Structure probing data (2A3 and DMS) for a 177-nucleotide construct. The reactions ran in a buffer of 150 mM KOAc, 10 mM MgCl2 and 150 mM bicine (pH 8.5), at 24 C. The 2A3 profile rests on 2,910 reads. Reactivities are given for positions 27 through 126. It was measured as part of the RMDB library M2PK50. For 2A3 the reverse transcriptase was SuperScript II with manganese.
RNA sequence: GGGAACGACUCGAGUAGAGUCGAAAAGCAAUGACCUUCGGGUCAUUGCAAAAUAAAACAGGCAAGUUCCAGCCUGAAAUAGGAACAAAGAUCGAAAGAUCAAAAGGGGCAUCUUCGGAUGCCCCAACUUCAGUAUUUGGUUCGCCAAAUACUGAAGAAAAGAAACAACAACAACAAC
Reactivity to 2A3 in 0.01 (KOAc 150mM, MgCl2 10mM, bicine 150mM(pH8.5), 24C), signal-to-noise 1, nucleotides 027 to 126: g000c000a020a000u010g000a010c020c010u050u060c300g020g010g000u020c000a000u000u000g000c010a000a000a000a010u030a000a030a010a040c120a010g000g020c020a060a140g010u010u010c000c000a000g000c020c010u000g000a010a010a000u060a040g000g010a000a010c010a050a140a000g010a010u010c010g040a060a000a050g010a010u030c080a030a010a020a070g000g000g010g000c020a000u010c000u060u130c290g060g000a000u000g000c000c000c000c000a000a010
Reactivity to DMS in 0.01 (KOAc 150mM, MgCl2 10mM, bicine 150mM(pH8.5), 24C), signal-to-noise 1, nucleotides 027 to 126: g020c000a000a020u000g000a000c000c000u010u000c300g010g030g020u020c010a000u000u000g000c010a020a020a020a030u000a040a020a050a250c250a030g020g030c010a100a080g010u010u000c000c000a070g000c000c000u010g000a000a030a000u030a130g000g010a000a000c020a120a050a110g000a010u000c000g000a120a080a130g000a020u020c020a070a010a080a090g000g000g050g050c000a000u000c010u020u010c180g050g000a000u010g000c000c000c000c000a000a000